The record gives the reactivity of an RNA of 177 nucleotides to 2A3 and DMS. High 2A3 reactivity points to a flexible backbone, as in loops and unpaired stretches. It was measured as part of the RMDB library RFM100. Values cover nucleotides 27 to 126. The RNA was probed in 150 mM KOAc, 10 mM MgCl2 and 150 mM bicine (pH 8.5) at 24 C.
[RMDB]
RNA sequence: GGGAACGACUCGAGUAGAGUCGAAAAUGCUUGACCAUAGAAGAAAAUGCAGAUUAAUGCUGCAUUUUAUGACAUAAAAUACAGCAGCGAUAGUUAGUAGUUAUGAUAGCCUUCGGGAAGCCAGAGCAUCAGCCUAGGAGUUCGCUCCUAGGCUGAUAAAAGAAACAACAACAACAAC
Reactivity to 2A3 in 0.01 (KOAc 150mM, MgCl2 10mM, bicine 150mM(pH8.5), 24C), signal-to-noise 2, nucleotides 027 to 126: u050g000c000u080u110g200a120c000c010a050u080a070g100a080a000g070a000a070a000a000u000g050c000a010g020a180u090u240a200a040u300g040c000u000g000c000a000u000u000u000u030a020u060g000a000c060a020u230a030a040a030a000u030a000c040a000g050c030a000g060c100g070a140u130a030g060u010u140a000g040u030a000g000u060u060a000u090g170a090u030a070g110c100c070u140u140c110g000g150g020a000a000g000c020c070a100g030a020g030c010
Reactivity to DMS in 0.01 (KOAc 150mM, MgCl2 10mM, bicine 150mM(pH8.5), 24C), signal-to-noise 2, nucleotides 027 to 126: u010g010c000u010u000g010a160c090c070a180u070a040g030a130a050g020a080a000a010a000u010g020c000a000g050a010u000u030a050a050u040g040c000u000g000c010a000u000u000u000u000a040u020g000a130c080a080u000a020a020a060a100u040a030c070a100g000c020a120g000c110g000a010u000a050g040u000u000a050g000u000a040g040u000u000a060u010g030a010u000a050g000c110c000u000u000c020g010g010g010a090a030g010c020c080a080g000a070g010c090